This 207-nucleotide RNA was probed chemically with 2A3 and DMS. Values are in units of 0.01, from 0 to 300, in steps of 10. For 2A3 the reverse transcriptase was SuperScript II with manganese. For 2A3, 6,508 sequencing reads were counted. 2A3 is a SHAPE reagent: it acylates the 2'-hydroxyl of flexible nucleotides of all four kinds. Source: RMDB library OK3TST, as collected in RNAgym. The DMS profile rests on 3,888 reads. Values cover nucleotides 27 to 156. The reactions ran in a buffer of 150 mM KOAc, 10 mM MgCl2 and 150 mM bicine (pH 8.5), at 24 C.
[RMDB]
RNA sequence: GGGAACGACUCGAGUAGAGUCGAAAACAUCAAACAAAGCGAGUUCGGCGAGCGAUUGCUGAAUCAACGUGACCUGUCGAUCAGCCGCGGACAAAUCAACGAGGGCAACGGGAACCGUCCACGGGUGUAUGAGGCGAUUCAGUUUUCCUCACGCGGGACGCGUCAUUAUAUUCGUAUAAUGACGCGUAAAAGAAACAACAACAACAAC
Reactivity to 2A3 in 0.01 (KOAc 150mM, MgCl2 10mM, bicine 150mM(pH8.5), 24C), signal-to-noise 7, nucleotides 027 to 156: c040a060u190c060a040a070a100c070a070a110a030g040c040g050a040g070u060u050c030g040g010c040g040a030g010c090g100a120u020u090g000c020u030g020a040a020u080c040a050a070c060g040u060g080a100c000c020u070g050u120c040g030a080u060c030a020g110c010c010g000c010g030g010a020c030a030a130a080u180c060a060a050c080g020a040g040g050g010c010a030a020c050g130g070g040a030a030c030c010g010u000c010c010a040c060g100g020g070u120g030u040a110u130g050a080g020g000c010g010a010u010u020c000a010g010u000u000u030u010c000c000u010c000a030c030g010c020g000g010g020
Reactivity to DMS in 0.01 (KOAc 150mM, MgCl2 10mM, bicine 150mM(pH8.5), 24C), signal-to-noise 2, nucleotides 027 to 156: c020a170u000c060a110a070a110c070a080a140a280g000c040g000a270g020u000u010c010g020g010c030g000a090g030c230g000a160u010u000g040c030u010g000a040a050u000c010a120a070c050g010u000g010a120c060c010u010g010u000c060g000a040u000c040a080g060c010c000g020c000g060g030a200c030a060a070a150u030c060a080a080c100g000a130g010g020g000c000a100a060c040g010g030g020a050a060c080c050g000u010c010c030a140c050g000g000g040u000g030u000a100u010g010a130g000g010c050g010a030u000u000c060a070g010u000u010u010u000c000c000u000c010a170c060g020c040g000g030g010